[RMDB]
RNA sequence: GGGAACGACUCGAGUAGAGUCGAAAAAUAGGAGUAGAGUCUUUUGGUAAGAUGCUGAUAAUGAGUAGGGGAGAUGAAAGUUAAUCGUUCCCUGUCUCUCCGCUGGAAAGAAUUGCAAAACAAAGAACUUACAAUACGUGUUCGCACGUAUUGUAAGAAAAGAAACAACAACAACAAC
Reactivity to 2A3 in 0.01 (KOAc 150mM, MgCl2 10mM, bicine 150mM(pH8.5), 24C), signal-to-noise 1, nucleotides 027 to 126: a020u130a040g040g010a010g020u070a040g030a030g040u000c030u030u010u120u080g080g000u010a070a070g040a100u070g010c020u030g040a050u070a230a070u120g030a000g010u080a090g010g010g020g000a010g000a000u030g020a010a070a070g050u090u150a100a050u060c020g000u000u000c030c000c010u000g010u000c010u000c000u000c020c000g000c000u010g000g080a070a030a060g080a050a030u060u020g000c050a000a040a100a030c020a040a100a050g010a080a060
Reactivity to DMS in 0.01 (KOAc 150mM, MgCl2 10mM, bicine 150mM(pH8.5), 24C), signal-to-noise 3, nucleotides 027 to 126: a080u000a080g010g000a050g020u010a070g020a080g010u010c020u000u000u010u010g020g020u010a090a060g000a070u010g000c050u000g000a100u000a100a080u000g010a050g030u010a100g030g000g000g000a010g010a030u000g020a070a100a140g000u000u000a060a110u000c020g020u000u000c010c000c000u000g000u000c010u000c000u000c000c000g000c080u000g000g010a080a080a070g000a060a090u000u000g010c080a070a060a050a050c080a070a050a170g000a090a130